The data come from the RNA Mapping Database (RMDB), library OK1LIB. The record gives the reactivity of an RNA of 177 nucleotides to DMS and 2A3. Reactivities are rounded to 0.1 and cut off at 0 and 3. The DMS profile rests on 3,666 reads.
[RMDB]
RNA sequence: GGGAACGACUCGAGUAGAGUCGAAAACGAUCGCUCUUGUUCUCUAUGCUCUUGAGGGCAGACACGAUGCGAAGUAUGGCGGGAGAAAGCACGCGAGGAGGAGGGCUGUCGUGGCCCUUGAGUCGAAGCUACCACGGAUAUUCGUAUCCGUGGUAGCAAAAGAAACAACAACAACAAC
Reactivity to DMS in 0.01 (KOAc 150mM, MgCl2 10mM, bicine 150mM(pH8.5), 24C), signal-to-noise 3, nucleotides 027 to 126: c020g010a060u000c130g000c120u000c010u000u000g000u000u000c070u030c080u000a110u010g040c070u000c140u020u010g010a200g000g010g000c010a070g010a170c080a070c120g010a040u000g020c110g000a050a120g000u010a070u000g040g000c030g010g020g040a040g000a090a050a080g000c020a100c070g010c050g010a050g000g000a140g040g000a050g010g000g010c020u010g010u000c170g010u010g000g040c020c000c010u000u020g000a070g000u000c050g000a070a100
Reactivity to 2A3 in 0.01 (KOAc 150mM, MgCl2 10mM, bicine 150mM(pH8.5), 24C), signal-to-noise 3, nucleotides 027 to 126: c010g030a090u060c000g020c020u010c000u070u050g090u140u000c010u000c020u040a110u150g020c000u030c030u140u220g080a240g000g070g000c000a010g060a020c030a010c040g070a060u110g000c020g010a050a040g050u090a120u120g070g060c080g000g050g010a080g060a060a050a030g060c090a010c050g030c000g010a060g020g030a030g020g080a000g010g010g000c000u010g010u090c090g040u090g010g040c000c000c000u000u050g060a020g040u060c020g010a060a020